[RMDB]
RNA sequence: GGGAACGACUCGAGUAGAGUCGAAAAUGUAUAAUGAUGAUAACCAUGCGUGUCAGCUGACUCUGUAAACCUCUGCUGUGUUGUUGCACUGGUCGGCGUUUUGUCAGCCUGAGUAUUCAGCACAGCACCAGGAAGAUAAGUUCGCUUAUCUUCCUGGAAAAGAAACAACAACAACAAC
Reactivity to 2A3 in 0.01 (KOAc 150mM, MgCl2 10mM, bicine 150mM(pH8.5), 24C), signal-to-noise 4, nucleotides 027 to 126: u110g040u030a100u030a200a140u140g090a040u060g010a010u040a100a060c030c010a030u130g020c080g050u040g030u030c010a010g000c050u030g030a040c030u000c020u080g090u110a030a130a120c010c010u040c080u050g000c000u010g000u000g010u000u010g000u000u010g020c010a000c040u010g000g020u020c000g010g020c020g020u050u080u170u300g020u010c000a010g000c000c010u000g010a000g010u020a130u080u040c010a010g000c000a000c000a000g000c000a000
Reactivity to DMS in 0.01 (KOAc 150mM, MgCl2 10mM, bicine 150mM(pH8.5), 24C), signal-to-noise 3, nucleotides 027 to 126: u020g010u010a070u010a090a080u000g020a100u000g000a080u000a080a110c060c070a100u000g010c080g030u000g010u000c040a040g010c070u000g020a200c110u000c060u000g000u010a060a070a140c040c040u000c110u000g010c010u000g000u000g030u000u000g020u000u000g000c000a060c010u000g020g020u000c050g000g000c010g020u000u010u020u000g020u000c010a050g000c000c000u000g000a040g020u000a040u010u000c010a020g010c010a020c010a010g000c020a040
Notes:
The record gives the reactivity of an RNA of 177 nucleotides to 2A3 and DMS. Reactivities are given for positions 27 through 126. Conditions: 150 mM KOAc, 10 mM MgCl2 and 150 mM bicine (pH 8.5), 24 C.